The data come from the RNA Mapping Database (RMDB), library OK3TST. The record gives the reactivity of an RNA of 207 nucleotides to 2A3 and DMS. For DMS the reverse transcriptase was MarathonRT.
[RMDB]
RNA sequence: GGGAACGACUCGAGUAGAGUCGAAAAUAGGUGGUGACUUCCUUCACAGUGACGGCCUGGACGCAGUAACCCCGGCAAGCGGUCACGUUCUCGAUCAGGAUAGCCGAUACGCAAAACUUGUUUAUGUUGCCAUUCGUUCUCUGCGUCGCGCAGUGUCCUAUUUCAAGAUAUUCGUAUCUUGAAAUAGAAAAGAAACAACAACAACAAC
Reactivity to 2A3 in 0.01 (KOAc 150mM, MgCl2 10mM, bicine 150mM(pH8.5), 24C), signal-to-noise 2, nucleotides 027 to 156: u190a030g080g020u080g020g000u040g050a050c030u060u060c020c030u100u070c120a130c050a090g040u060g060a040c020g030g020c030c020u030g040g030a040c030g020c080a000g010u080a060a080c000c000c000c000g000g010c050a080a060g110c000g040g000u030c030a010c080g050u110u020c030u060c050g090a120u080c050a010g000g070a050u060a050g000c050c030g010a010u100a130c040g040c080a010a140a030a120c070u050u060g040u090u190u040a100u160g030u030u030g010c000c000a080u070u020c040g020u130u060c090u000c000u020g000c000g140u140c090g060c020g010c060a030g020u020g010u030c010
Reactivity to DMS in 0.01 (KOAc 150mM, MgCl2 10mM, bicine 150mM(pH8.5), 24C), signal-to-noise 2, nucleotides 027 to 156: u000a030g000g020u000g000g020u000g020a150c040u000u000c030c020u010u010c060a090c050a140g020u020g020a070c050g010g030c000c020u000g000g010a040c030g020c040a100g020u000a120a130c020c010c030c030g030g030c040a080a090g000c040g000g010u000c050a050c030g010u000u000c030u000c050g020a140u010c060a100g000g000a100u000a070g000c020c010g030a130u000a080c070g000c050a070a070a110a090c080u010u010g030u000u010u010a130u060g020u000u000g000c020c100a210u000u000c030g020u000u000c020u000c000u010g020c050g020u010c080g010c100g000c020a090g010u000g010u010c060
Conditions: 150 mM KOAc, 10 mM MgCl2 and 150 mM bicine (pH 8.5), 24 C.
For DMS, 6,634 sequencing reads were counted.